The data come from the RNA Mapping Database (RMDB), library OK1LIB. The record gives the reactivity of an RNA of 177 nucleotides to 2A3 and DMS. In probing experiments dimethyl sulfate is read out at A N1 and C N3, which are open when not base-paired. DMS adducts were read by reverse transcription with MarathonRT. As a SHAPE reagent, 2A3 marks flexible, mostly unpaired nucleotides at the ribose 2'-OH. For 2A3, 3,761 sequencing reads were counted.
[RMDB]
RNA sequence: GGGAACGACUCGAGUAGAGUCGAAAACUUUGGGAGUGGUAUUUCGUGGAGCAUGAACCUCUUUUCUCAACUAAAAUAAUAAGUGAUUUAAGUAUCUUUAUAAAAGACAGGGCUACCGCUGUGAACCCAUAGACAUGUACUUCGGUACAUGUCUAUGAAAAGAAACAACAACAACAAC
Reactivity to 2A3 in 0.01 (KOAc 150mM, MgCl2 10mM, bicine 150mM(pH8.5), 24C), signal-to-noise 6, nucleotides 027 to 126: c030u100u060u070g050g000g020a040g010u060g030g030u050a100u030u110u050c050g010u050g030g020a050g020c060a090u060g070a050a050c000c000u020c010u040u050u080u030c030u000c000a050a100c030u180a050a050a070a180u260a100a050u120a180a030g080u020g050a070u050u100u080a070a070g050u040a100u010c000u000u090u020a200u060a080a140a010a020g030a020c010a030g020g010g010c010u030a030c000c040g030c030u010g010u010g060a020a050c000c000
Reactivity to DMS in 0.01 (KOAc 150mM, MgCl2 10mM, bicine 150mM(pH8.5), 24C), signal-to-noise 4, nucleotides 027 to 126: c060u010u010u010g010g010g020a080g020u010g000g030u010a050u030u010u000c080g020u020g000g010a040g010c030a060u010g000a060a090c100c020u000c040u000u010u000u000c000u010c060a060a090c100u050a060a050a040a050u020a050a060u010a060a070g010u010g000a060u010u000u020a050a100g000u000a020u000c010u000u010u010a070u020a050a050a070a120g000a060c070a100g000g000g020c020u020a040c070c040g000c020u000g010u010g000a070a110c100c060